Structure probing data (DMS and 2A3) for a 177-nucleotide construct. 2A3 adducts were read by reverse transcription with SuperScript II with manganese. DMS adducts were read by reverse transcription with MarathonRT.
[RMDB]
RNA sequence: GGGAACGACUCGAGUAGAGUCGAAAAACGCCGACCCCGGAGGCCUCCUUUGAGUCGAUGGGGCGGCUUCAUUAAGCGGCGCUAACAAGGCGAACAAAUGCAGGGCCCAGAAGCUUUCUUGCAGCGCACUACUGUCAGAAUUCGUUCUGACAGUAGUAAAAGAAACAACAACAACAAC
Reactivity to DMS in 0.01 (KOAc 150mM, MgCl2 10mM, bicine 150mM(pH8.5), 24C), signal-to-noise 9, nucleotides 027 to 126: a070c150g000c000c000g010a160c000c000c000c000g000g010a300g010g000c030c030u010c270c240u020u030u010g000a120g040u010c010g020a300u050g000g000g000g000c010g000g000c000u000u000c030a050u020u020a050a090g010c050g010g010c020g020c060u000a050a100c140a080a100g000g000c020g010a060a070c090a060a080a050u010g010c050a050g000g000g010c020c030c020a100g010a090a090g000c060u000u000u010c020u010u010g020c100a050g000c060g020c140
Reactivity to 2A3 in 0.01 (KOAc 150mM, MgCl2 10mM, bicine 150mM(pH8.5), 24C), signal-to-noise 9, nucleotides 027 to 126: a000c060g000c020c010g140a300c020c000c000c000g020g010a010g000g010c010c020u140c020c060u190u170u260g070a080g020u020c010g010a010u040g010g000g000g000c000g000g010c000u020u070c020a040u020u080a080a010g040c020g030g000c000g020c040u030a060a060c050a110a040g030g010c020g040a050a040c030a060a080a020u120g020c030a040g020g010g030c010c010c020a040g070a050a020g020c010u070u100u040c030u050u120g020c050a020g020c010g010c040